[RMDB]
RNA sequence: GGGAACGACUCGAGUAGAGUCGAAAAGGAUCAAACAUCCCUCCGAGAUCUUCACGGUAACGCCCGUGCCGAUCUCAAAUCCCGCUUUUCUCAGCCAUUUGGCGCUGAUUUUGAUCACCGGCGUGUCGAAUAAAUUCGCAUUCGUGCGAAUUUAUUCAAAAGAAACAACAACAACAAC
Reactivity to DMS in 0.01 (KOAc 150mM, MgCl2 10mM, bicine 150mM(pH8.5), 24C), signal-to-noise 4, nucleotides 027 to 126: g000g020a010u000c090a060a090a100c240a140u000c010c000c020u010c180c120g010a020g000a010u010c010u010u000c010a030c000g000g000u010a100a090c240g010c190c000c000g000u000g000c100c130g010a020u000c000u000c020a060a060a120u020c020c010c010g000c120u010u000u000u020c110u010c030a050g010c020c040a220u010u020u040g010g010c070g010c010u010g000a050u000u010u000u010g000a050u000c050a130c140c070g010g010c030g020u010g010u020c100
Reactivity to 2A3 in 0.01 (KOAc 150mM, MgCl2 10mM, bicine 150mM(pH8.5), 24C), signal-to-noise 9, nucleotides 027 to 126: g030g010a030u050c080a050a050a060c040a080u040c020c000c000u020c070c090g000a000g000a010u000c000u030u020c010a000c000g010g040u120a240a050c110g050c020c000c000g000u000g000c010c010g000a010u000c000u000c000a010a030a010u010c010c010c000g030c040u110u090u120u040c080u010c020a020g010c020c020a170u120u130u300g140g000c090g000c020u010g020a050u070u030u050u130g070a050u050c020a010c080c030g030g010c020g020u040g090u100c060
Description
An RNA of 177 nucleotides, treated with DMS and 2A3 and read out base by base. For 2A3 the reverse transcriptase was SuperScript II with manganese. The RNA was probed in 150 mM KOAc, 10 mM MgCl2 and 150 mM bicine (pH 8.5) at 24 C.